[RMDB]
RNA sequence: GGGAACGACUCGAGUAGAGUCGAAAAGAGGGCAGAGUAAAGGGACUGGUGCCGUACCUAUCAUCACUGGGCUACGAAUGCCCCUCAUAUCACAAUCCUGCUGACUAUGUCCUGGAGGUGGCGUCCGCUUUAAGGACGGCUUCGGCCGUCCUUAAAGAAAAGAAACAACAACAACAAC
Reactivity to DMS in 0.01 (KOAc 150mM, MgCl2 10mM, bicine 150mM(pH8.5), 24C), signal-to-noise 3, nucleotides 027 to 126: g020a100g020g000g010c070a060g000a130g030u000a070a090a120g010g000g010a060c070u000g020g010u000g030c080c020g010u000a080c060c020u010a060u000c110a090u020c150a070c190u000g010g000g010c170u010a130c050g000a040a100u000g010c030c020c010c060u000c040a060u010a070u020c050a040c130a080a090u010c030c030u000g000c090u000g010a090c140u000a090u000g020u000c020c030u010g010g000a070g010g030u010g010g010c060g000u000c050c080g000
Reactivity to 2A3 in 0.01 (KOAc 150mM, MgCl2 10mM, bicine 150mM(pH8.5), 24C), signal-to-noise 1, nucleotides 027 to 126: g100a020g000g000g020c050a010g030a060g070u130a080a140a030g030g020g020a040c040u070g030g020u060g070c060c020g040u030a030c020c030u060a100u160c050a000u070c030a030c100u080g080g000g000c000u040a040c030g110a220a070u110g020c010c000c060c000u070c020a150u180a060u080c020a020c030a020a060u010c010c000u030g000c020u020g040a030c010u070a060u200g030u000c020c000u010g090g050a010g040g000u020g000g020c040g040u010c030c050g000